Conditions: 150 mM KOAc, 10 mM MgCl2 and 150 mM bicine (pH 8.5), 24 C. Structure probing data (DMS and 2A3) for a 170-nucleotide construct. It was measured as part of the RMDB library 15KLIB.
RNA sequence: GGGAACGACUCGAGUAGAGUCGAAAAUGUUUCCCAGCCAGGGAUUUUCAUCCUCGAGUUUCUUGAUGGUUCUCCUGCUCUUCCGGAGCCUUCUUUCGAGGUCUUCCGCGUCUUUUCUUGCUUGGAUAUAGUCUAGCGUUCGCGCUAGACAAAAGAAACAACAACAACAAC
Reactivity to DMS in 0.01 (KOAc 150mM, MgCl2 10mM, bicine 150mM(pH8.5), 24C), signal-to-noise 3, nucleotides 027 to 129: u020g010u010u010u010c010c000c060a200g000c170c160a110g020g010g010a100u000u010u020u000c000a010u020c050c040u020c090g030a160g020u000u000u000c050u000u000g050a000u040g010g030u030u010c000u010c020c010u000g040c050u000c050u040u030c110c100g000g000a080g050c100c050u000u000c000u010u020u010c060g020a080g000g090u030c050u000u000c010c000g080c140g030u020c040u000u060u030u000c010u000u060g040c000u010u010g050g000a090u000a080u050a100
Reactivity to 2A3 in 0.01 (KOAc 150mM, MgCl2 10mM, bicine 150mM(pH8.5), 24C), signal-to-noise 5, nucleotides 027 to 129: u100g010u010u030u020c000c000c000a010g040c010c030a020g000g010g030a020u030u060u060u210c050a050u020c000c010u010c020g060a070g020u010u070u050c030u050u130g040a090u100g070g000u100u030c010u020c020c020u050g060c030u030c000u170u050c040c030g050g000a010g000c000c010u010u010c000u020u110u080c030g040a020g050g010u010c010u070u010c020c000g030c040g070u050c000u050u100u020u010c000u020u050g070c030u030u050g060g000a060u090a020u020a230
The DMS profile rests on 14,188 reads.